[RMDB]
RNA sequence: GGGAACGACUCGAGUAGAGUCGAAAAGCAACUAUAAGGCUAAGGUUGCUGGUAUUGGAAAAUACUACAAGACUAAUACUUGUAGGUUUGUAGAAUUAGAUGACCAAGGGCAUCAUUUAGACUCCUAGACGGCCGAAGUUCGCUUCGGCCAAAAGAAACAACAACAACAAC
Reactivity to 2A3 in 0.01 (KOAc 150mM, MgCl2 10mM, bicine 150mM(pH8.5), 24C), signal-to-noise 3, nucleotides 027 to 129: g040c000a000a000c010u050a000u070a230a030g080g000c010u030a030a060g060g000u000u030g000c010u000g000g040u120a100u010u110g070g020a020a000a000a090u150a140c010u000a000c010a100a000g000a010c080u200a060a110u110a150c020u000u010g000u010a010g000g030u010u010u030g020u030a000g050a070a000u130u050a020g000a070u060g020a010c010c100a110a020g060g030g000c010a010u000c000a000u040u010u050a040g000a020c010u020c010c030u000a040g020a100c060
Reactivity to DMS in 0.01 (KOAc 150mM, MgCl2 10mM, bicine 150mM(pH8.5), 24C), signal-to-noise 3, nucleotides 027 to 129: g000c030a030a040c000u040a000u070a120a060g000g000c060u000a030a150g000g000u000u000g030c010u010g050g030u030a000u000u000g040g000a080a030a020a030u010a150c000u000a000c010a000a000g010a000c160u040a040a080u100a150c040u050u000g000u000a000g030g010u000u000u000g020u020a080g000a060a080u010u000a030g000a080u070g000a100c020c030a070a090g010g040g070c050a060u010c010a100u120u010u050a070g000a020c170u010c060c050u020a030g020a120c130